[RMDB]
Conditions: 150 mM KOAc, 10 mM MgCl2 and 150 mM bicine (pH 8.5), 24 C. Chemical mapping of a 207-nucleotide RNA with 2A3 and DMS. The 2A3 profile rests on 2,431 reads. For 2A3 the reverse transcriptase was SuperScript II with manganese. It was measured as part of the RMDB library RNAMAK. Values cover nucleotides 27 to 156.
RNA sequence: GGGAACGACUCGAGUAGAGUCGAAAACUUUAUACAGGCUUCGGCCUGUAUAAAGAAAAACCGUAGGCUGAGUACUGAGCAACAGCUUCGAAAGAGGACAUGCUCUGUACGCAGCCUAAACGGAAAAAACUAUCAACGGAUUCGUCCGUUGAUAGAAGAUAUAUCUACGAUUCGUCGUAGAUAUAUCAAAAGAAACAACAACAACAAC
Reactivity to 2A3 in 0.01 (KOAc 150mM, MgCl2 10mM, bicine 150mM(pH8.5), 24C), signal-to-noise 2, nucleotides 027 to 156: c000u010u000u000a000u010a000c000a000g010g030c020u060u180c290g160g000c050c000u000g000u050a000u000a000a000a000g010a030a010a000a020a010c020c000g000u020a010g020g000c050u000g010a000g010u000a000c000u010g010a010g010c010a010a150c040a170g050c020u020u000c010g110a160a100a060g030a030g020g020a050c020a060u050g000c000u000c000u010g000u000a000c000g020c000a000g090c000c000u000a010a000a010c010g010g090a140a060a000a040a000a050c010u020a000u020c000a000a010c000g000g020a020u050u070c220g050u000c070c000g000u000u010g000a000u000a000g000a020a000
Reactivity to DMS in 0.01 (KOAc 150mM, MgCl2 10mM, bicine 150mM(pH8.5), 24C), signal-to-noise 2, nucleotides 027 to 156: c010u010u000u000a010u000a010c010a020g030g020c020u000u000c300g070g030c060c000u000g000u000a010u000a010a010a040g020a090a100a100a070a150c080c000g030u010a020g020g000c040u000g000a060g010u000a000c010u000g010a030g040c000a030a110c100a210g000c010u000u000c000g000a180a130a260g010a020g010g000a060c060a300u000g000c000u010c000u000g000u000a000c030g010c000a030g000c010c000u000a000a020a050c020g010g010a020a050a050a060a110a150c000u000a010u000c000a000a000c000g030g000a070u000u000c300g000u000c000c000g060u000u010g000a010u000a000g000a060a120